Structure probing data (DMS and 2A3) for a 177-nucleotide construct. DMS adducts were read by reverse transcription with MarathonRT. 2A3 adducts were read by reverse transcription with SuperScript II with manganese.
RNA sequence: GGGAACGACUCGAGUAGAGUCGAAAAAAGGAUGUCUCAAGUUUGUUUGAAUUUGGACGAAUCUAUAUAUUAAAUAGUGUCUAGAUACAUCCAAGUUUAGACAAAUUUGAUACAUCCUUUUCGGGACCCUAUUGACCUCAUUCGUGAGGUCAAUAGGAAAAGAAACAACAACAACAAC
Reactivity to DMS in 0.01 (KOAc 150mM, MgCl2 10mM, bicine 150mM(pH8.5), 24C), signal-to-noise 1, nucleotides 027 to 126: a000a000g000g000a020u010g000u010c070u000c000a000a000g000u000u000u000g020u020u010u000g000a000a000u000u000u000g000g020a000c050g030a130a000u000c000u000a000u010a010u000a050u000u010a120a090a170u050a120g010u000g000u000c060u000a010g000a020u010a060c090a140u000c010c000a020a010g050u000u000u000a000g000a000c000a000a000a000u000u000u000g010a000u000a000c000a030u000c000c010u010u000u000u000c090g000g000g010a220c110
Reactivity to 2A3 in 0.01 (KOAc 150mM, MgCl2 10mM, bicine 150mM(pH8.5), 24C), signal-to-noise 5, nucleotides 027 to 126: a000a000g000g000a000u000g010u010c000u000c010a000a010g010u000u000u010g000u010u000u010g000a000a010u000u000u000g000g010a010c010g030a060a020u010c000u000a000u000a020u000a010u070u210a170a200a210u290a080g030u020g020u010c020u010a000g000a010u020a040c010a010u000c000c000a000a000g000u000u000u000a000g000a000c000a000a000a000u000u000u000g000a000u000a000c000a000u000c000c000u000u000u000u000c000g000g020g070a020c000

The 2A3 profile rests on 7,534 reads. For DMS, 3,152 sequencing reads were counted.